[RMDB]
RNA sequence: GGGAACGACUCGAGUAGAGUCGAAAAUCAUGAUGACUUGGUCACUGUUACGGCCACUCUAGCACUACUUGGAUGUGAUGGAUCUCCCUGGAGAUUUCUGAAGAUGUACAUUUCCAAACACUUUCAGGUGCUUCAUGUCAUUCGUGACAUGAAGCACAAAAGAAACAACAACAACAAC
Reactivity to 2A3 in 0.01 (KOAc 150mM, MgCl2 10mM, bicine 150mM(pH8.5), 24C), signal-to-noise 2, nucleotides 027 to 126: u170c050a050u070g060a010u050g080a070c100u100u100g010g000u020c010a000c100u020g020u100u100a130c060g000g000c010c000a050c000u030c010u030a070g000c050a010c020u190a010c000u090u040g060g000a050u060g020u020g130a030u000g020g050a000u040c010u020c030c010c000u060g070g000a030g040a080u100u120u060c000u060g030a050a000g020a030u030g040u090a040c060a200u010u000u050c030c000a050a050a060c080a030c070u120u080u240c030a010g000